Structure probing data (2A3 and DMS) for a 207-nucleotide construct. 2A3 adducts were read by reverse transcription with SuperScript II with manganese. The data come from the RNA Mapping Database (RMDB), library PDB130. The DMS profile rests on 2,770 reads. For DMS the reverse transcriptase was MarathonRT.

[RMDB]
RNA sequence: GGGAACGACUCGAGUAGAGUCGAAAAAAACGCCAAGCUAAUACAUGAACCAACCGGAUGUUCUCUGUUCCGGCGGCAGGGCAACCUGCUGCCAUGGGACGUCCAGCGAAUGAAUGAAAGUAAAACCAAUGCCUUCACCGGCAGUAACACUCAGAAGCUUAUUCUCAUAGUUCGCUAUGAGAAUAAGAAAAGAAACAACAACAACAAC
Reactivity to 2A3 in 0.01 (KOAc 150mM, MgCl2 10mM, bicine 150mM(pH8.5), 24C), signal-to-noise 4, nucleotides 027 to 156: a000a000a000c060g020c020c000a030a020g020c050u080a070a040u110a230c050a070u090g050a040a060c030c020a030a020c050c050g020g010a020u020g060u200u010c030u010c010u080g110u230u100c060c080g000g000c000g010g020c000a000g000g010g000c020a030a100c000c000u000g000c000u010g000c000c000a020u040g010g010g010a000c000g010u000c000c010a000g020c030g090a070a050u100g040a060a040u120g050a110a030a040g070u120a050a040a040a050c030c020a080a070u080g000c000c020u040u070c040a040c070c020g010g000c020a000g010u030a040a010c030a030c060u110c060a050g050a130a000g040
Reactivity to DMS in 0.01 (KOAc 150mM, MgCl2 10mM, bicine 150mM(pH8.5), 24C), signal-to-noise 2, nucleotides 027 to 156: a040a050a020c090g050c010c050a060a120g020c080u030a090a090u000a130c070a090u020g010a110a080c040c020a130a040c030c000g020g020a010u000g000u010u020c010u010c060u010g030u000u010c070c090g020g030c010g010g020c020a080g000g010g050c300a120a210c000c000u000g000c020u010g030c000c000a050u000g020g000g020a050c010g010u000c010c000a040g000c060g000a140a060u010g000a170a070u010g010a050a030a130g030u000a010a070a090a140c090c010a080a170u000g000c020c020u000u000c160a140c110c100g000g000c050a030g010u000a090a080c040a100c040u000c040a100g000a080a140g010